[RMDB]
Structure probing data (2A3 and DMS) for a 177-nucleotide construct. For DMS, 1,328 sequencing reads were counted. For 2A3 the reverse transcriptase was SuperScript II with manganese. DMS adducts were read by reverse transcription with MarathonRT. It was measured as part of the RMDB library OK2TRN.
RNA sequence: GGGAACGACUCGAGUAGAGUCGAAAACGCAUACUACUUUUGGCACGCGGAAACCAAUACUAGCACAUGGGAGAACCCAUACGAGAAAGCGGCUUCUCCUUCCCUAGGAAAGGCGAGAGCGGAAGGCAGUCUCUGAAGAUUUCGAUCUUCAGAGACUAAAAGAAACAACAACAACAAC
Reactivity to 2A3 in 0.01 (KOAc 150mM, MgCl2 10mM, bicine 150mM(pH8.5), 24C), signal-to-noise 1, nucleotides 027 to 126: c010g060c010a050u080a170c060u020a040c000u120u060u160u100g100g000c070a010c050g030c010g030g020a060a050a000c020c000a030a010u100a090c030u010a010g020c200a030c040a300u230g000g030g000a040g030a010a000c020c000c020a020u100a050c090g020a080g140a170a100a000g080c100g090g020c050u000u010c000u000c000c030u040u030c010c000c000u020a040g040g030a080a050a050g060g000c000g010a060g030a000g050c020g020g060a040a020g110g020c010
Reactivity to DMS in 0.01 (KOAc 150mM, MgCl2 10mM, bicine 150mM(pH8.5), 24C), signal-to-noise 2, nucleotides 027 to 126: c090g010c080a110u000a050c070u020a050c100u000u000u010u000g000g030c080a090c030g000c080g010g000a090a090a090c020c010a040a100u030a060c040u000a030g010c110a090c110a090u010g010g000g020a060g020a030a100c110c010c020a130u000a090c160g000a070g010a070a040a120g010c120g020g000c210u000u000c040u010c020c010u000u000c100c080c020u010a070g010g020a070a070a060g000g030c070g000a100g010a120g000c070g000g000a040a080g000g010c140